Conditions: 150 mM KOAc, 10 mM MgCl2 and 150 mM bicine (pH 8.5), 24 C. Structure probing data (DMS and 2A3) for a 170-nucleotide construct. DMS (dimethyl sulfate) methylates the pairing face of unpaired adenines and cytosines. The 2A3 profile rests on 22,925 reads.
[RMDB]
RNA sequence: GGGAACGACUCGAGUAGAGUCGAAAAUAUUUUGCCUGGUGAGUUUUCCAAGAAGCAGUUAGGACUGCUCCAACCUACUGACAAUUCUACAACUGUUAGUGUUACUGUAUCCAGUAACAUGGUUGAAAUACCAUUCACUUCGGUGAAUGGAAAAGAAACAACAACAACAAC
Reactivity to DMS in 0.01 (KOAc 150mM, MgCl2 10mM, bicine 150mM(pH8.5), 24C), signal-to-noise 5, nucleotides 027 to 129: u080a000u020u030u020u060g000c030c030u000g040g020u020g020a010g020u010u000u010u010c030c030a100a110g050a000a000g000c030a010g000u010u090a090g060g060a100c050u040g030c040u040c050c010a030a030c020c020u000a100c050u000g010a000c030a000a110u050u050c120u050a120c110a050a040c090u010g000u000u000a060g020u040g010u020u030a020c040u000g040u030a140u010c220c010a000g040u000a000a050c000a080u050g030g030u000u010g010a050a030a050u050a130
Reactivity to 2A3 in 0.01 (KOAc 150mM, MgCl2 10mM, bicine 150mM(pH8.5), 24C), signal-to-noise 9, nucleotides 027 to 129: u160a060u030u130u090u110g050c010c000u020g030g020u060g020a080g010u010u030u050u020c020c020a050a030g070a050a020g020c010a010g020u070u210a090g050g090a050c000u020g010c010u010c000c000a030a040c010c000u060a030c020u020g050a030c050a070a120u130u060c060u150a070c020a130a060c020u030g050u100u090a040g000u020g000u060u000a000c000u000g090u170a160u120c120c000a000g000u000a010a010c000a050u050g030g000u000u040g030a030a020a010u110a030